[RMDB]
RNA sequence: GGGAACGACUCGAGUAGAGUCGAAAACGAACUGAUCGAUCACACUAUCGCCAUCGCCAAACUGAACGAGCGUGGUGAUCUAGUACAGCGGUUGACGCGGGCUCGCCAGCGGAUCACCGACCCGCAGAAAGUGUCGUGUUUUCGAACACGACACUUUAAAAGAAACAACAACAACAAC
Reactivity to 2A3 in 0.01 (KOAc 150mM, MgCl2 10mM, bicine 150mM(pH8.5), 24C), signal-to-noise 4, nucleotides 027 to 126: c010g080a030a030c050u040g030a160u080c050g000a020u060c030a010c020a010c110u130a020u090c050g000c020c030a140u180c080g000c030c030a130a210a160c190u190g040a110a010c060g020a070g020c020g020u010g000g000u000g020a010u000c050u050a020g020u040a070c040a050g030c050g040g030u030u090g080a040c010g010c000g010g020g020c030u040c050g020c000c000a060g050c030g030g000a020u030c010a000c050c000g030a060c000c000c000g020c000a010g130
Reactivity to DMS in 0.01 (KOAc 150mM, MgCl2 10mM, bicine 150mM(pH8.5), 24C), signal-to-noise 3, nucleotides 027 to 126: c070g000a050a110c010u000g000a100u000c080g000a030u020c040a040c120a040c050u010a040u020c000g010c010c040a080u060c020g080c070c040a120a030a100c150u030g000a070a160c190g040a090g000c050g070u010g000g020u000g000a020u030c020u050a080g050u000a140c100a060g000c130g000g000u000u000g000a110c070g000c010g010g020g030c160u010c100g020c020c030a090g000c050g000g000a010u010c070a040c120c000g000a100c030c010c000g060c060a130g000